This 177-nucleotide RNA was probed chemically with DMS and 2A3. Source: RMDB library OK2TRN, as collected in RNAgym. The DMS profile rests on 1,908 reads. For DMS the reverse transcriptase was MarathonRT.
RNA sequence: GGGAACGACUCGAGUAGAGUCGAAAAUGCCACUACGGGGAGGUGGUAAGAUGAUGAAAAGAGAUGAUGUUGAUAAAAUCCCCACGAACGCCAUGGAAUUUAAAAGAGAUUUCAAACCAGCAAGAGCCCUAUACCCCUAUUUCGAUAGGGGUAUAGGAAAAGAAACAACAACAACAAC
Reactivity to DMS in 0.01 (KOAc 150mM, MgCl2 10mM, bicine 150mM(pH8.5), 24C), signal-to-noise 3, nucleotides 027 to 126: u010g010c020c000a010c020u010a090c200g010g000g030g050a070g020g020u010g020g000u010a030a120g010a070u010g030a130u000g010a050a060a080a080g000a130g000a070u000g000a060u010g000u010u000g000a100u010a070a050a110a130u000c000c000c000c020a170c170g000a050a070c130g020c040c050a040u010g010g000a050a030u000u010u010a030a070a100a180g000a160g000a040u000u010u000c020a060a110a130c090c110a060g000c080a100a050g000a150g000c160
Reactivity to 2A3 in 0.01 (KOAc 150mM, MgCl2 10mM, bicine 150mM(pH8.5), 24C), signal-to-noise 1, nucleotides 027 to 126: u040g020c000c000a000c030u090a070c110g000g000g030g000a010g000g000u020g010g000u020a010a090g100a060u160g010a030u080g050a010a000a140a050g130a030g030a030u090g010a010u110g070u210u060g030a090u120a070a110a020a060u000c000c000c010c020a000c040g000a030a010c030g000c010c020a030u030g010g000a030a030u080u040u060a140a210a060a000g130a020g000a060u000u120u040c110a100a190a110c040c000a010g000c010a000a010g040a000g110c000